[RMDB]
RNA sequence: GGGAACGACUCGAGUAGAGUCGAAAAGUGCAUUGCAUACAUAUGUAGUACGUAGAUACAUUGAAAUAUAGCUGAUAUUUGUGUAUCUACUAAUCUGAAUUGAAUGAGAUGAAGAAAUGAACGUGGACCCUAAGCGCUAAUUCGUUAGCGCUUAGGGAAAAGAAACAACAACAACAAC
Reactivity to DMS in 0.01 (KOAc 150mM, MgCl2 10mM, bicine 150mM(pH8.5), 24C), signal-to-noise 2, nucleotides 027 to 126: g030u010g000c030a060u000u000g010c000a000u000a100c020a030u070a020u000g060u010a030g020u000a160c180g020u000a000g000a000u000a000c010a000u000u030g000a010a010a010u000a000u010a170g000c290u070g000a160u000a000u000u000u040g050u000g030u000a000u000c000u020a010c040u020a090a000u060c000u030g000a060a110u000u000g000a060a030u010g020a060g030a030u000g000a030a020g010a110a050a080u010g070a080a090c120g020u020g020g040a300
Reactivity to 2A3 in 0.01 (KOAc 150mM, MgCl2 10mM, bicine 150mM(pH8.5), 24C), signal-to-noise 5, nucleotides 027 to 126: g080u080g000c020a090u030u100g040c010a020u060a140c030a050u140a050u240g080u080a020g040u020a030c050g000u000a000g000a000u000a000c000a000u090u300g070a010a020a000u010a000u010a020g230c200u140g170a030u000a010u000u000u000g010u000g010u000a000u000c000u000a000c000u000a020a050u020c010u010g080a060a020u110u060g070a090a050u110g050a090g030a120u110g040a020a140g070a080a120a030u160g030a060a020c080g030u060g020g060a060
Structure probing data (DMS and 2A3) for a 177-nucleotide construct. For 2A3 the reverse transcriptase was SuperScript II with manganese. Values are in units of 0.01, from 0 to 300, in steps of 10. Conditions: 150 mM KOAc, 10 mM MgCl2 and 150 mM bicine (pH 8.5), 24 C. It was measured as part of the RMDB library OK1LIB. The DMS profile rests on 3,030 reads.